[RMDB]
RNA sequence: GGGAACGACUCGAGUAGAGUCGAAAAGAGCGAUCGAGCGUGGAUAAUAAUCGGGCAUAAGCAUAGUACCGAAGAUAUGGAAUUGAAAAAUUGGUAGGGGAGCAUUCUAGUUGCACUGAAGGCGUAUGCAUCGUAUACUCUUCGGAGUAUACGAUGCAAAAGAAACAACAACAACAAC
Reactivity to DMS in 0.01 (KOAc 150mM, MgCl2 10mM, bicine 150mM(pH8.5), 24C), signal-to-noise 2, nucleotides 027 to 126: g020a060g020c080g010a030u020c020g010a100g000c050g000u010g000g000a040u010a060a070u000a060a080u000c030g030g000g000c000a110u010a130a150g010c060a070u040a050g030u010a080c000c010g010a050a050g000a080u000a030u010g010g000a070a110u030u000g000a030a050a070a080a040u020u020g000g000u020a050g020g000g000g000a050g000c070a070u000u000c100u000a060g020u000u020g010c010a060c080u000g020a040a100g000g000c040g000u000a070u000
Reactivity to 2A3 in 0.01 (KOAc 150mM, MgCl2 10mM, bicine 150mM(pH8.5), 24C), signal-to-noise 2, nucleotides 027 to 126: g000a000g010c050g020a010u020c010g060a030g000c030g020u020g030g020a060u070a100a040u070a050a070u140c030g000g000g050c030a040u020a140a040g040c060a050u050a100g010u030a080c020c020g020a010a000g030a030u050a060u020g130g030a030a110u040u140g080a160a050a000a090a100u070u060g000g090u070a070g000g010g020g020a020g010c000a000u060u000c000u030a010g000u020u120g020c050a020c100u130g000a060a000g080g020c060g010u030a020u060
An RNA of 177 nucleotides, treated with DMS and 2A3 and read out base by base.
Source: RMDB libraries RFM100 and RFMREP, as collected in RNAgym.
The reactions ran in a buffer of 150 mM KOAc, 10 mM MgCl2 and 150 mM bicine (pH 8.5), at 24 C.
The 2A3 profile rests on 786 reads.